An RNA of 207 nucleotides, treated with DMS and 2A3 and read out base by base.
RNA sequence: GGGAACGACUCGAGUAGAGUCGAAAAAUAUGAGUAAAACGGAACGUGAUAAUUUCUCAUUGGCUGUGUUUCCAGUGAUAAAACAUAGAUGGCAUAACGCACACGUUGUAAAACAUAAAGGAAUAUACAAAGUUAGUACAGAAGCACGUGGAAAAAACUACCACUAAUAGUUCGCUAUUAGUGGUAGAAAAGAAACAACAACAACAAC
Reactivity to DMS in 0.01 (KOAc 150mM, MgCl2 10mM, bicine 150mM(pH8.5), 24C), signal-to-noise 3, nucleotides 027 to 156: a110u000a060u000g010a090g010u000a030a050a160a170c040g000g010a080a070c070g020u000g030a100u010a060a120u000u000u000c040u000c020a090u000u000g020g040c070u010g010u000g000u000u000u010c030c020a140g020u000g010a120u020a030a040a060a050c030a120u000a050g000a130u000g020g000c040a120u010a080a120c080g010c080a110c090a080c050g000u000u010g000u000a050a080a090a050c040a090u010a100a100a090g000g010a060a070u000a050u010a080c030a030a060a140g010u000u000a080g010u000a080c070a090g010a060a100g020c020a010c060g010u000g020g010a000a030a040a060a090a140
Reactivity to 2A3 in 0.01 (KOAc 150mM, MgCl2 10mM, bicine 150mM(pH8.5), 24C), signal-to-noise 5, nucleotides 027 to 156: a000u140a050u090g030a020g040u110a000a050a040a030c040g040g050a050a020c030g040u020g050a050u050a240a130u030u130u020c030u000c020a030u020u030g040g000c030u030g010u010g020u100u040u020c000c010a020g010u000g030a080u060a070a080a020a010c030a010u090a040g080a090u050g030g000c040a040u050a180a040c070g020c030a020c000a010c080g000u020u020g020u050a030a070a040a010c010a010u120a060a110a010g050g000a040a030u130a000u010a070c020a020a090a000g010u050u050a040g020u030a050c030a050g030a040a010g040c000a010c030g020u060g030g000a020a020a020a150a000a000
For 2A3 the reverse transcriptase was SuperScript II with manganese. It was measured as part of the RMDB library OK3TST. For 2A3, 5,053 sequencing reads were counted.